Structure probing data (2A3 and DMS) for a 177-nucleotide construct. It was measured as part of the RMDB library 15KREP. The 2A3 profile rests on 1,103 reads. Reactivities are rounded to 0.1 and cut off at 0 and 3. DMS adducts were read by reverse transcription with MarathonRT.
[RMDB]
RNA sequence: GGGAACGACUCGAGUAGAGUCGAAAAGAAACAAAGGCGCUUAAAGAGUUAUAUGGCCCCGUUGAUCCUACUUUCUUACACAGAUUCUAUUCACUUAAGGCUGCAGUCCAUGGGUGGAAGAUGGUUGCAGAGAUUAGAUGUUCGCAUCUAAUCUCUGAAAAGAAACAACAACAACAAC
Reactivity to 2A3 in 0.01 (KOAc 150mM, MgCl2 10mM, bicine 150mM(pH8.5), 24C), signal-to-noise 2, nucleotides 027 to 126: g000a000a060a000c040a010a060a000g030g000c010g000c070u080u100a070a150a000g100a070g090u190u060a180u030a040u210g020g000c000c020c000c030g030u010u040g000a040u020c000c000u030a040c020u010u100u020c020u050u100a030c040a000c000a070g150a160u050u000c010u050a290u030u030c020a040c060u070u030a080a020g040g020c020u170g070c120a050g010u000c030c000a050u100g020g000g000u020g030g000a020a010g010a000u020g090g000u090u110g000
Reactivity to DMS in 0.01 (KOAc 150mM, MgCl2 10mM, bicine 150mM(pH8.5), 24C), signal-to-noise 3, nucleotides 027 to 126: g000a130a070a120c050a050a090a130g020g010c270g010c040u000u000a050a130a170g010a100g010u010u000a090u000a120u010g000g030c020c030c010c090g010u000u010g010a090u010c000c010u000a060c120u010u010u000c030u010u010a150c120a100c050a100g010a070u000u010c020u010a070u000u000c030a040c070u010u010a100a100g000g000c020u010g020c190a110g000u000c040c010a080u000g010g000g030u000g000g010a030a020g000a070u000g010g010u010u010g010